[RMDB]
RNA sequence: GGGAACGACUCGAGUAGAGUCGAAAAGCGAGAGAAAGCUGGCUCUCCCUUAGCCAUCCGAGGUGACGCUCGUCCUCCUUCGGAUGCCCAGGUCGGACCGCGAGGAGGUGGAGAUGCCAUGCCGACCCACCAUGUAGUUCUUCGGAACUACAUGGUGAAAAGAAACAACAACAACAAC
Reactivity to DMS in 0.01 (KOAc 150mM, MgCl2 10mM, bicine 150mM(pH8.5), 24C), signal-to-noise 3, nucleotides 027 to 126: g000c110g020a110g000a120g010a050a110a130g010c080u020g000g000c010u000c000u000c020c030c070u000u000a070g000c120c060a030u000c020c000g010a040g010g020u000g000a060c180g000c070u000c130g000u010c020c090u000c020c010u000u020c010g010g000a040u010g000c060c040c020a110g010g010u010c070g000g000a300c040c050g000c090g010a130g000g000a080g010g020u020g010g000a030g010a070u010g000c010c010a040u000g030c010c030g000a150c030c030
Reactivity to 2A3 in 0.01 (KOAc 150mM, MgCl2 10mM, bicine 150mM(pH8.5), 24C), signal-to-noise 2, nucleotides 027 to 126: g030c020g030a070g010a020g080a160a030a020g030c020u040g010g000c000u000c000u000c010c000c010u050u140a040g030c040c020a030u050c030c010g020a020g010g000u080g030a020c030g050c160u050c110g080u060c020c020u030c010c000u090u070c010g000g020a020u030g010c010c000c010a030g000g030u030c000g010g040a080c040c000g000c060g040a060g020g010a020g030g010u110g010g020a070g000a010u160g020c000c000a050u120g020c000c000g010a010c000c000
Annotation
Structure probing data (DMS and 2A3) for a 177-nucleotide construct. DMS adducts were read by reverse transcription with MarathonRT. 2A3 adducts were read by reverse transcription with SuperScript II with manganese.